[RMDB]
Description
An RNA of 177 nucleotides, treated with DMS and 2A3 and read out base by base. For 2A3 the reverse transcriptase was SuperScript II with manganese. For DMS, 2,240 sequencing reads were counted. Conditions: 150 mM KOAc, 10 mM MgCl2 and 150 mM bicine (pH 8.5), 24 C.
RNA sequence: GGGAACGACUCGAGUAGAGUCGAAAAGAAUAUAAGAGCGCAGUAAAUGUGAGAGCAAACUGCGCCCGGACUGUAGGAUCCGGUGGCACAGCAACGCUCAUUCACAAUACGCUGUGCCACAUGAAGAGAUACCGACUACGUUCGCGUAGUCGGUAUCAAAAGAAACAACAACAACAAC
Reactivity to DMS in 0.01 (KOAc 150mM, MgCl2 10mM, bicine 150mM(pH8.5), 24C), signal-to-noise 2, nucleotides 027 to 126: g030a110a110u020a120u040a070a030g000a290g000c000g000c000a050g000u000a080a040a170u000g000u000g000a090g000a190g000c000a060a120a060c020u000g000c000g020c000c000c000g000g000a030c090u010g010u040a080g000g000a210u000c000c020g000g030u000g000g000c020a000c010a010g000c000a100a140c180g000c100u000c010a080u080u020c140a060c290a060a110u100a060c240g000c000u000g000u000g000c020c000a000c020a080u000g000a080a060g000a200
Reactivity to 2A3 in 0.01 (KOAc 150mM, MgCl2 10mM, bicine 150mM(pH8.5), 24C), signal-to-noise 4, nucleotides 027 to 126: g040a060a020u260a000u030a090a030g040a000g000c000g000c020a000g000u020a000a140a050u040g010u020g060a070g000a000g040c040a100a250a000c000u000g000c000g000c000c000c000g010g000a000c010u140g090u230a040g080g080a090u000c000c000g000g000u020g000g000c000a000c010a010g000c020a130a050c080g030c020u040c060a030u240u190c100a030c050a070a070u180a120c110g000c000u000g010u000g000c000c000a010c000a010u140g050a070a010g060a010